[RMDB]
RNA sequence: GGGAACGACUCGAGUAGAGUCGAAAAGAUAUGGAGUCGAAGGUGGGAGUUCCUGAUCGGAAACGAUCAGAAGAACGAGGAUCACCUCGACUCCUAAGUCAAAAGCAGGAUUGUUCGCAAUCCUGCACUUUUACUCUCUCUUCGGAGAGAGUAAAAGAAAAGAAACAACAACAACAAC
Reactivity to 2A3 in 0.01 (KOAc 150mM, MgCl2 10mM, bicine 150mM(pH8.5), 24C), signal-to-noise 4, nucleotides 027 to 126: g010a010u020a000u080g000g000a010g000u010c030g090a260a120g000g000u020g030g090g090a300g030u010u000c000c000u000g000a000u000c000g010g000a020a000a000c000g000a000u010c000a000g040a190a100g000a000a000c030g060a220g040g210a210u100c000a010c010c000u000c000g010a000c000u000c000c000u000a010a000g000u000c000a030a020a050a080g000c000a000g020g000a010u010u020g050u120u220c300g010c190a010a010u000c000c000u000g000c010a010
Reactivity to DMS in 0.01 (KOAc 150mM, MgCl2 10mM, bicine 150mM(pH8.5), 24C), signal-to-noise 3, nucleotides 027 to 126: g010a030u000a110u010g000g000a020g030u000c000g010a090a070g010g020u000g020g010g020a130g000u000u000c010c000u000g000a020u000c010g000g000a050a020a060c000g010a010u000c000a010g000a110a130g000a010a010c000g030a140g010g010a120u010c020a000c010c000u000c000g000a010c000u000c010c000u000a000a050g010u000c000a090a110a120a160g020c000a000g000g000a010u000u000g020u010u020c250g020c000a010a010u000c000c000u000g010c010a010